[RMDB]
RNA sequence: GGGAACGACUCGAGUAGAGUCGAAAAGAUAUGGACGGCUCACCGGAGCGACGAUCUAGGCUCGGAAACGAGCCUAGGGAGCUCGUGACCGUCCUAAGUCAAACAGACUGGGUUCGCCCAGUCUGAACUUUCGUCGUUUGUUCGCAAACGACGAAAGAAAAGAAACAACAACAACAAC
Reactivity to DMS in 0.01 (KOAc 150mM, MgCl2 10mM, bicine 150mM(pH8.5), 24C), signal-to-noise 1, nucleotides 027 to 126: g000a050u000a000u010g000g000a020c000g000g000c300u000c030a110c230c300g000g000a010g030c000g030a110c290g010a030u020c000u030a020g040g040c000u000c020g010g000a000a010a010c000g030a030g010c000c000u000a010g000g000g000a040g000c000u000c070g000u020g000a010c000c000g000u000c000c010u000a000a030g000u000c000a090a130a300c040a000g000a010c000u000g000g020g020u000u050c300g020c000c000c010a000g000u000c000u010g000a080a090
Overview
An RNA of 177 nucleotides, treated with DMS and read out base by base. The DMS profile rests on 611 reads. Conditions: 150 mM KOAc, 10 mM MgCl2 and 150 mM bicine (pH 8.5), 24 C. Reactivities are given for positions 27 through 126.